[RMDB]
RNA sequence: GGGAACGACUCGAGUAGAGUCGAAAAGAAUAUAAAGCGCGAGGGACCAAUUGCGAGCGACCUCGCGCCACCAGCUGGCGACUCACCAAGCGCGCAGCCAGCUGGAGGUUACGCUCGCAACAGAAGAAAAUUUAUCGCUGUUCGCAGCGAUAAAUUUAAAAGAAACAACAACAACAAC
Reactivity to DMS in 0.01 (KOAc 150mM, MgCl2 10mM, bicine 150mM(pH8.5), 24C), signal-to-noise 1, nucleotides 027 to 126: g000a150a080u070a260u010a180a070a260g020c000g000c000g000a020g020g040g030a110c040c080a050a170u000u000g000c060g000a000g040c000g040a020c000c010u000c000g000c000g000c010c050a000c010c020a000g000c000u000g000g000c000g000a300c010u020c110a080c140c120a260a040g010c090g090c120g000c240a200g010c010c000a010g000c000u000g020g000a020g030g020u020u040a170c000g000c040u000c000g000c000a020a060c300a080g020a010a000g030a040
Reactivity to 2A3 in 0.01 (KOAc 150mM, MgCl2 10mM, bicine 150mM(pH8.5), 24C), signal-to-noise 2, nucleotides 027 to 126: g000a050a010u200a030u130a160a050a010g000c020g010c000g030a000g000g000g020a020c040c030a090a260u190u120g000c000g000a010g000c000g000a010c000c000u000c000g040c000g000c000c000a010c000c010a000g000c000u010g020g000c050g030a030c000u020c090a100c070c040a130a060g070c080g000c020g030c160a030g000c000c000a000g000c000u000g010g000a020g010g000u030u060a040c030g000c000u000c000g000c000a000a000c010a020g110a080a000g040a010
Annotation: This 177-nucleotide RNA was probed chemically with DMS and 2A3. The data come from the RNA Mapping Database (RMDB), library OK1LIB. 2A3 is a SHAPE reagent: it acylates the 2'-hydroxyl of flexible nucleotides of all four kinds. For DMS, 1,284 sequencing reads were counted. For 2A3, 1,148 sequencing reads were counted.